[RMDB]
RNA sequence: GGGAACGACUCGAGUAGAGUCGAAAAAGAAUAGUUUUCGAACUAUUCUCACGACGACCUUGGGAAACCCUGAGGCGCGAUCCGACGCGAUCGUCUGUUCGAACACCUGGUUGUUCGCAACCAGGAAACGAUCAGGAGAUUUCGAUCUCCUGAUCGUAAAAGAAACAACAACAACAAC
Reactivity to DMS in 0.01 (KOAc 150mM, MgCl2 10mM, bicine 150mM(pH8.5), 24C), signal-to-noise 2, nucleotides 027 to 126: a020g000a020a000u000a020g010u000u000u000u030c190g030a000a000c000u000a020u000u000c000u000c080a220c040g020a060c030g010a230c130c000u000u000g020g010g020a110a080a100c190c010c000u010g000a020g000g010c040g010c000g000a060u000c000c030g000a130c110g000c110g010a030u000c010g000u010c070u010g000u000u000c040g000a140a070c120a150c000c000u000g000g010u000u020g000u000u020c180g000c010a020a010c000c000a010g000g000a000a020
Reactivity to 2A3 in 0.01 (KOAc 150mM, MgCl2 10mM, bicine 150mM(pH8.5), 24C), signal-to-noise 1, nucleotides 027 to 126: a030g010a020a010u030a010g010u020u020u050u130c190g030a010a010c000u010a000u020u000c000u010c010a040c010g060a000c020g080a110c000c010u050u000g000g030g000a140a290a210c100c000c010u030g100a020g000g000c000g010c010g010a020u030c000c030g230a140c130g050c100g010a030u030c010g050u020c100u130g090u070u080c020g000a070a030c010a040c070c010u030g000g030u000u000g000u040u040c230g000c040a010a020c000c000a020g000g000a000a040
Record summary
An RNA of 177 nucleotides, treated with DMS and 2A3 and read out base by base. For DMS the reverse transcriptase was MarathonRT. Source: RMDB library M2PK50, as collected in RNAgym.